[RMDB]
RNA sequence: GGGAACGACUCGAGUAGAGUCGAAAAGCGUGGUCGUACGCGACCACGCAAGAUGGUAAGAGAGAUUACCAUCUGUUAAGUGAUAUAGAUAAGAUCUCUCAAAGCUGCGGCAUACGUGCCGCAGCAACCAUCCUGCUGGCUUCGGCCAGCAGGAUGGAAAAGAAACAACAACAACAAC
Reactivity to 2A3 in 0.01 (KOAc 150mM, MgCl2 10mM, bicine 150mM(pH8.5), 24C), signal-to-noise 1, nucleotides 027 to 126: g000c000g000u000g080g000u040c150g000u110a030c300g050c000g060a000c000c000a000c000g000c000a000a000g000a000u000g000g000u010a050a160g000a050g000a000g020a030u020u010a000c020c020a010u000c000u000g130u020u070a000a180g030u050g170a080u050a050u180a250g210a010u090a030a180g000a000u000c000u000c000u000c060a010a010a010g010c060u000g000c000g000g000c060a000u060a190c180g170u030g000c000c000g000c000a000g000c020a000a000